Source information: Structure probing data (DMS and 2A3) for a 177-nucleotide construct. Source: RMDB libraries RFM100 and RFMREP, as collected in RNAgym. DMS (dimethyl sulfate) methylates the pairing face of unpaired adenines and cytosines. For 2A3 the reverse transcriptase was SuperScript II with manganese. Conditions: 150 mM KOAc, 10 mM MgCl2 and 150 mM bicine (pH 8.5), 24 C.
[RMDB]
RNA sequence: GGGAACGACUCGAGUAGAGUCGAAAAACGACGUACGCGUCGAAUUGCAAUUAGUUUCUUUGGUCGUCCAGCCUUAGGUGAUUUCUCUGAUCAUAAAGCUAGACAACCAUUGAAGUUCGUUGUGGAACUUAGGUGUCAUAUUCGUAUGACACCUAAGAAAAGAAACAACAACAACAAC
Reactivity to DMS in 0.01 (KOAc 150mM, MgCl2 10mM, bicine 150mM(pH8.5), 24C), signal-to-noise 4, nucleotides 027 to 126: a150c020g000a010c000g000u000a070c270g020c010g020u000c000g000a110a100u000u020g000c040a040a040u020u020a050g000u010u000u000c000u000u010u010g000g000u000c030g000u000c000c030a010g010c030c040u000u000a060g010g010u000g000a050u000u010u010c230u040c270u040g000a020u010c000a040u000a020a140a070g000c010u000a060g010a010c000a030a000c000c000a020u000u000g000a010a020g010u000u000c070g000u000u010g020u000g000g000a110a150
Reactivity to 2A3 in 0.01 (KOAc 150mM, MgCl2 10mM, bicine 150mM(pH8.5), 24C), signal-to-noise 9, nucleotides 027 to 126: a000c010g010a010c020g010u080a020c270g010c010g110u010c020g040a080a110u210u140g010c020a020a040u060u020a070g050u010u020u010c000u020u010u000g010g000u010c020g000u000c010c020a010g020c040c020u080u070a140g030g210u030g020a010u000u200u090c180u080c100u260g030a010u000c000a010u050a030a050a000g000c000u000a010g000a010c000a010a000c010c000a000u000u010g000a010a000g000u020u080c100g000u000u020g010u020g040g060a040a030